[RMDB]
Record summary: This 177-nucleotide RNA was probed chemically with 2A3 and DMS. Reactivities are given for positions 27 through 126.

RNA sequence: GGGAACGACUCGAGUAGAGUCGAAAACAUGUACCCUUCGGGGUACAUGAACAUAACGCGGGCGUGGGACACCGCCGGAGCUAGCCUCAGAUAGUCCCAGUAUUAGGUGCGCCUUCGGGCGCACCAACAUAUGGUCGAGGUUCGCCUCGACCAUAUGAAAAGAAACAACAACAACAAC
Reactivity to 2A3 in 0.01 (KOAc 150mM, MgCl2 10mM, bicine 150mM(pH8.5), 24C), signal-to-noise 2, nucleotides 027 to 126: c000a000u000g000u020a000c000c000c000u000u040c210g050g000g000g010u000a000c000a000u000g000a000a010c020a080u160a150a060c110g010c030g030g010g000c110g130u070g000g000g000a000c010a010c030c010g020c020c050g090g010a000g050c040u140a030g020c010c000u050c030a020g020a160u120a060g000u000c000c000c000a000g030u020a190u140u210a050g010g000u000g030c020g030c020c030u020u080c290g100g020g030c000g040c000a000c010c000a000a000
Reactivity to DMS in 0.01 (KOAc 150mM, MgCl2 10mM, bicine 150mM(pH8.5), 24C), signal-to-noise 2, nucleotides 027 to 126: c020a000u000g000u000a000c000c000c000u000u020c200g030g000g030g020u010a010c000a010u000g010a110a060c100a130u010a080a180c200g000c010g000g000g000c140g020u000g000g010g010a060c020a080c010c010g010c010c190g020g000a040g000c070u000a090g010c120c000u000c050a090g020a090u010a070g020u000c010c000c010a070g010u000a050u010u000a110g000g020u010g010c000g000c000c000u000u020c200g020g020g000c000g000c000a000c000c010a010a060
About this RNA:
The data come from the RNA Mapping Database (RMDB), library M2PK50. Reactivities are rounded to 0.1 and cut off at 0 and 3.